[RMDB]
RNA sequence: GGGAACGACUCGAGUAGAGUCGAAAAGAUAUGGAUCCCGUAACUUCAACAGCUAAGAUCGGAAACGAUCUUAGACAUGAAGAUUACAGGGAUCCUAAGUCAAAACACCUUUGGUUCGCCAAAGGUGGAGCUAGAGAAUGUUCGCAUUCUCUAGCUCAAAAGAAACAACAACAACAAC
Reactivity to DMS in 0.01 (KOAc 150mM, MgCl2 10mM, bicine 150mM(pH8.5), 24C), signal-to-noise 4, nucleotides 027 to 126: g000a050u000a300u000g010g000a000u010c000c000c000g010u000a000a020c000u000u000c000a040a070c300a200g010c000u010a000a010g010a020u000c000g000g000a140a130a210c000g000a000u000c010u000u000a000g000a030c120a210u010g010a020a000g010a210u000u000a010c010a160g030g000g000a010u000c000c000u010a030a090g000u010c030a080a080a140a300c010a000c010c000u000u000u000g000g010u000u010c250g020c010c000a010a000a010g010g010u000g000
Reactivity to 2A3 in 0.01 (KOAc 150mM, MgCl2 10mM, bicine 150mM(pH8.5), 24C), signal-to-noise 2, nucleotides 027 to 126: g020a000u090a030u170g000g000a000u000c000c010c000g000u010a010a020c010u040u030c020a130a120c040a260g050c000u010a000a000g000a010u000c000g020g030a070a070a040c010g000a010u000c000u000u000a000g000a000c000a050u080g000a010a010g010a030u030u050a110c300a300g000g010g000a000u000c000c000u000a000a020g010u000c030a000a010a160a120c010a010c000c000u020u000u000g090g000u080u080c300g050c110c010a000a000a000g000g010u010g000
Chemical mapping of a 177-nucleotide RNA with DMS and 2A3.
For 2A3, 10,344 sequencing reads were counted.
Values are in units of 0.01, from 0 to 300, in steps of 10.
2A3 adducts were read by reverse transcription with SuperScript II with manganese.